[RMDB]
RNA sequence: GGGAACGACUCGAGUAGAGUCGAAAAUAUGUUAAGGAUGGUAAAUACUUUACAAGUGAACCACCCGUAACAUAUUCACCAGCUACAAUUUUAGCUGGUAGUGUCUACACUAAUAGCUGCCUUGUAUAUGCCUUGUCGUUCGCGACAAGGAAAAGAAACAACAACAACAAC
Reactivity to 2A3 in 0.01 (KOAc 150mM, MgCl2 10mM, bicine 150mM(pH8.5), 24C), signal-to-noise 9, nucleotides 027 to 129: u010a000u000g000u000u000a020a020g000g000a030u000g000g020u030a060a140a140u150a080c010u070u090u090a090c120a110a050g000u010g040a030a010c000c000a000c000c000c000g000u010a000a000c000a000u000a000u040u030c020a020c010c000a000g030c000u010a030c100a300a260u080u110u100u110a030g000c000u000g020g010u000a020g010u000g020u020c070u080a070c060a040c070u140a050a090u050a110g040c050u070g050c030c020u070u050g090u050a120u020a020u240g070
Reactivity to DMS in 0.01 (KOAc 150mM, MgCl2 10mM, bicine 150mM(pH8.5), 24C), signal-to-noise 8, nucleotides 027 to 129: u010a030u000g020u000u000a040a020g050g020a080u000g010g010u020a040a090a100u050a030c010u000u000u000a060c250a080a040g010u040g020a200a020c000c010a020c040c000c010g020u000a010a010c000a020u020a000u000u000c130a070c060c000a060g030c050u010a000c270a090a100u040u050u030u030a030g000c000u000g000g000u020a040g010u000g000u000c080u000a090c070a080c070u040a070a090u010a060g000c050u020g000c070c170u030u030g040u050a080u000a130u070g010

Structure probing data (2A3 and DMS) for a 170-nucleotide construct. The reactions ran in a buffer of 150 mM KOAc, 10 mM MgCl2 and 150 mM bicine (pH 8.5), at 24 C. For 2A3, 25,405 sequencing reads were counted.